[RMDB]
RNA sequence: GGGAACGACUCGAGUAGAGUCGAAAACUGAGGCUAUCCAGGAGACGCAGCUAUCAGUCAACUCAAUAGCAUAAAGACACUUAUCACUUUGGAGAUUCCAAGGAUUUUAGGAGUUAUAUCCCAGGAAGUGGGAACAAAGAGCAAAUAUAUAUGUCAACCUUUUACUAAAUUUCGAUUUAGUAAAAGGAAAAGAAACAACAACAACAAC
Reactivity to 2A3 in 0.01 (KOAc 150mM, MgCl2 10mM, bicine 150mM(pH8.5), 24C), signal-to-noise 6, nucleotides 027 to 156: c020u020g010a020g050g000c000u020a030u110c040c070a090g050g050a100g040a040c070g040c090a020g010c020u070a120u280c010a010g040u040c040a050a070c030u040c070a040a110u060a090g020c020a030u130a100a130a010g070a020c020a000c060u070u070a050u110c020a030c130u030u030u070g030g000a160g050a140u210u070c030c010a030a040g070g000a070u060u080u080u140a040g000g010a030g000u050u030a080u030a020u180c030c000c010a000g060g010a090a060g090u070g030g010g020a030a010c030a040a070a020g040a010g030c010a000a090a000u150a020u080a060u100a040u240g040u170c000a020a080
Reactivity to DMS in 0.01 (KOAc 150mM, MgCl2 10mM, bicine 150mM(pH8.5), 24C), signal-to-noise 2, nucleotides 027 to 156: c010u000g010a110g010g040c030u000a070u000c040c060a150g020g000a250g030a170c040g000c070a070g000c020u000a070u010c070a100g000u000c030a100a120c070u000c020a080a070u000a100g030c050a120u010a060a050a100g010a140c020a040c050u000u010a080u000c040a050c020u000u010u000g000g010a150g020a130u000u000c020c020a070a090g010g000a120u010u000u000u000a070g000g010a090g030u000u000a100u000a100u010c020c000c000a100g000g050a060a120g030u010g020g030g020a050a110c060a030a110a040g000a100g020c020a020a070a060u000a080u000a130u010a080u020g010u010c020a040a180
An RNA of 207 nucleotides, treated with 2A3 and DMS and read out base by base. Reactivities are given for positions 27 through 156. The reactions ran in a buffer of 150 mM KOAc, 10 mM MgCl2 and 150 mM bicine (pH 8.5), at 24 C. It was measured as part of the RMDB library OK3TST.